Source information: Chemical mapping of a 177-nucleotide RNA with DMS and 2A3. The data come from the RNA Mapping Database (RMDB), library OK1LIB. Conditions: 150 mM KOAc, 10 mM MgCl2 and 150 mM bicine (pH 8.5), 24 C. Values cover nucleotides 27 to 126.

RNA sequence: GGGAACGACUCGAGUAGAGUCGAAAAGGCAAGCAUGAUCCAGAUAAUUGGCAUUGCCAUUGGCCGACGAUAAGAUAUAACUUAAGCCUCGGCCACUGAAGAGGCUCAACAGAUAACGCGGCACUGAGCACCUCAUUUAGUUCGCUAAAUGAGGUGCAAAAGAAACAACAACAACAAC
Reactivity to DMS in 0.01 (KOAc 150mM, MgCl2 10mM, bicine 150mM(pH8.5), 24C), signal-to-noise 2, nucleotides 027 to 126: g000g020c070a020a050g010c070a080u020g000a060u020c050c120a050g000a100u020a110a120u000u010g000g000c100a140u000u000g010c000c000a080u000u000g010g020c010c010g000a010c190g000a080u010a080a000g000a150u010a180u050a150a160c040u000u000a050a060g000c140c150u000c000g010g020c020c030a030c090u000g010a080a060g030a090g000g000c030u020c060a120a010c160a060g030a120u000a020a060c110g020c030g010g000c060a080c170u000g000a300
Reactivity to 2A3 in 0.01 (KOAc 150mM, MgCl2 10mM, bicine 150mM(pH8.5), 24C), signal-to-noise 4, nucleotides 027 to 126: g010g030c030a000a070g000c020a060u130g010a130u160c010c020a020g070a160u280a110a120u230u060g030g000c070a120u000u130g000c000c000a000u030u110g010g000c030c000g060a100c010g020a060u070a090a040g070a020u070a050u070a300a110c010u030u010a020a010g010c010c040u000c000g010g000c010c000a030c040u130g020a080a020g040a050g080g000c020u020c060a060a070c020a050g090a050u070a130a000c010g010c000g040g000c010a020c040u000g020a030